Structure probing data (DMS and 2A3) for a 177-nucleotide construct. For DMS the reverse transcriptase was MarathonRT. The DMS profile rests on 4,651 reads. The data come from the RNA Mapping Database (RMDB), library OK2TRN. The RNA was probed in 150 mM KOAc, 10 mM MgCl2 and 150 mM bicine (pH 8.5) at 24 C.
RNA sequence: GGGAACGACUCGAGUAGAGUCGAAAACAGCUCCGCCGCGGGGCCAGACCGGGCCCGGGAGUGCAGCCCCGGCGGGCGGGCGGCGGCCGCGGCAGAGGGCAGCCCGGGGCGGCGCCGGCGGGCCGGGCUGCUGCAUGAACUUCGGUUCAUGCAGCAGAAAAGAAACAACAACAACAAC
Reactivity to DMS in 0.01 (KOAc 150mM, MgCl2 10mM, bicine 150mM(pH8.5), 24C), signal-to-noise 2, nucleotides 027 to 126: c050a160g010c050u000c010c030g010c030c020g010c050g020g020g000g010c030c050a080g010a120c070c020g000g010g030c030c020c030g020g010g000a110g020u000g010c090a130g000c050c000c000c020g010g010c080g020g010g020c030g020g000g020c020g000g010c020g010g020c030c020g020c040g010g030c050a050g020a050g000g000g000c040a090g010c050c000c000g020g020g000g020c040g020g020c010g020c020c010g010g020c020g030g020g010c000c020g010g010g010
Reactivity to 2A3 in 0.01 (KOAc 150mM, MgCl2 10mM, bicine 150mM(pH8.5), 24C), signal-to-noise 1, nucleotides 027 to 126: c010a020g010c040u030c040c010g040c030c020g050c030g020g030g020g070c000c000a030g050a110c020c000g070g090g050c020c040c120g040g030g020a090g030u120g030c070a040g030c000c000c000c000g050g090c010g010g110g040c080g040g050g000c050g020g020c000g070g010c010c020g050c020g020g000c030a030g080a030g030g020g000c030a040g020c020c010c000g000g020g040g030c000g020g040c020g040c010c010g090g120c020g020g010g050c000c000g030g010g000